The record gives the reactivity of an RNA of 177 nucleotides to DMS and 2A3.
Reactivities are rounded to 0.1 and cut off at 0 and 3.
For DMS the reverse transcriptase was MarathonRT.
The reactions ran in a buffer of 150 mM KOAc, 10 mM MgCl2 and 150 mM bicine (pH 8.5), at 24 C.

[RMDB]
RNA sequence: GGGAACGACUCGAGUAGAGUCGAAAAUCGUCACCUGAAUUGUAGUCUGGAGAGGCGUCCUCAGCGACGGACCGGGCCCAAGUUCCCUGGAAAGGGACGCCUGGGAGGGUGAGAGCCCCGUCCGGCCUCUGCAUAGGAGUUUCGACUCCUAUGCAGAAAAAGAAACAACAACAACAAC
Reactivity to DMS in 0.01 (KOAc 150mM, MgCl2 10mM, bicine 150mM(pH8.5), 24C), signal-to-noise 3, nucleotides 027 to 126: u000c040g000u010c040a050c030c010u000g010a130a130u050u000g010u030a080g010u010c020u000g030g010a130g000a070g020g000c010g000u000c010c010u000c170a060g000c110g020a130c050g000g010a040c020c260g010g000g000c000c050c080a050a120g010u020u010c000c010c010u000g000g040a130a170a100g000g000g000a020c040g000c020c000u010g010g010g000a140g020g010g000u000g000a050g010a110g000c000c000c010c190g010u000c000c000g000g000c080c060
Reactivity to 2A3 in 0.01 (KOAc 150mM, MgCl2 10mM, bicine 150mM(pH8.5), 24C), signal-to-noise 2, nucleotides 027 to 126: u080c020g040u010c020a020c010c010u020g100a140a110u150u210g050u140a090g080u050c140u120g060g040a140g020a040g110g010c010g020u010c000c010u080c040a050g070c050g160a070c020g020g000a000c000c020g000g010g010c000c010c010a020a040g030u070u020c010c000c020u000g090g040a140a090a030g020g000g000a000c000g000c030c010u010g010g040g010a080g000g010g010u000g010a100g000a010g010c010c000c000c010g020u000c010c010g010g000c000c010